The data come from the RNA Mapping Database (RMDB), library TTRDEL.
Structure probing data (DMS) for a 177-nucleotide construct.

RNA sequence: GGGAACGACUCGAGUAGAGUCGAAAAGAUAUGGAAUACUUCGAUAAGCACGGUAUCGGAAACGAUACACGUGCUUUUGACGAAGUUCCUAAGUCAAAAUCACUAGUGUGUUCGCACACUAGUGAAACGUGUCACUAUCCUUCGGGAUAGUGACACGAAAAGAAACAACAACAACAAC
Reactivity to DMS in 0.01 (KOAc 150mM, MgCl2 10mM, bicine 150mM(pH8.5), 24C), signal-to-noise 1, nucleotides 027 to 126: g000a060u000a300u010g000g020a040a070u010a110c010u020u010c020g030a110u010a040a010g000c010a010c000g040g000u000a010u010c000g000g010a110a080a170c010g000a000u000a000c000a070c000g020u010g040c000u000u000u010u000g030a180c070g000a010a000g000u000u000c000c020u020a120a100g040u020c030a080a030a110a110u000c010a000c020u020a020g000u000g030u000g020u030u000c300g020c010a000c020a010c000u000a000g010u010g010a000a040a020
For DMS, 1,071 sequencing reads were counted. The RNA was probed in 150 mM KOAc, 10 mM MgCl2 and 150 mM bicine (pH 8.5) at 24 C. Reactivities are given for positions 27 through 126.